[RMDB]
RNA sequence: GGGAACGACUCGAGUAGAGUCGAAAAAGUUGGACAUGGGUUAGUCGGUCCUAAGAGAUAGGGAACCUCCGUUUUAAAGAAGGCUCUUGUUAGUCUGACCUAUCGAAAGGGAAUGUAGUUAAGAUUCACAAGAAUGGUUGUUCGCAACCAUUCUUGUAAAAGAAACAACAACAACAAC
Reactivity to DMS in 0.01 (KOAc 150mM, MgCl2 10mM, bicine 150mM(pH8.5), 24C), signal-to-noise 2, nucleotides 027 to 126: a070g020u000u010g010g000a060c100a040u000g010g040g010u000u010a050g030u000c030g000g000u000c010c010u010a040a060g020a290g000a020u000a040g010g010g020a030a060c020c060u010c120c070g020u000u000u010u010a040a050a170g010a090a010g010g000c000u000c040u010u000g000u000u010a030g010u000c000u000g000a140c010c000u000a010u000c020g000a080a100a070g020g000g020a080a060u000g010u000a070g000u000u010a080a090g000a100u010u010c080